[RMDB]
RNA sequence: GGGAACGACUCGAGUAGAGUCGAAAAGCUCUGUAAUGGUAUGGGAUCCGAAGCCCCAUUGAGGGAUAAUACAGGCUCUCCCAUCCAACUCCUAUUCCAACACGUCCUCGUCGUACAGAGUGGUAACUAAGGUAUAGCUCCUUCGGGAGCUAUACAAGCUGAUAAAAGAGUUCGCUCUUUUAUCAGCAAAAGAAACAACAACAACAAC
Reactivity to 2A3 in 0.01 (KOAc 150mM, MgCl2 10mM, bicine 150mM(pH8.5), 24C), signal-to-noise 4, nucleotides 027 to 156: g000c000u000c010u040g050u060a090a210u120g010g020u160a030u020g000g010g020a080u250c010c000g040a030a030g030c000c000c000c000a060u110u160g100a300g020g020g010a040u100a180a030u130a240c140a080g000g000c000u000c000u000c020c000c010a000u050c010c010a010a020c010u060c010c010u070a100u120u070c030c010a070a030c030a020c070g080u070c010c040u080c060g100u030c010g000u040a010c000a010g010a020g030u070g040g020u080a080a060c060u060a140a060g100g000u000a000u000a000g010c000u020c020c010u040u010c070g080g000g000a010g000c010u000a000u000a000c000a000a000
Reactivity to DMS in 0.01 (KOAc 150mM, MgCl2 10mM, bicine 150mM(pH8.5), 24C), signal-to-noise 2, nucleotides 027 to 156: g020c010u000c020u010g010u000a060a170u000g010g000u000a030u000g000g010g020a040u000c020c070g020a140a270g010c020c000c000c030a300u010u000g020a110g020g040g000a050u000a050a120u020a150c110a290g040g020c070u010c070u010c000c010c010a060u010c030c020a060a090c060u010c030c030u000a110u000u000c040c020a090a130c050a110c090g000u000c020c030u000c050g000u020c090g000u000a030c000a040g000a080g000u000g000g000u000a030a210c070u020a100a100g010g020u000a020u010a040g010c010u000c000c020u000u000c300g060g030g000a010g000c010u000a000u000a000c000a050a100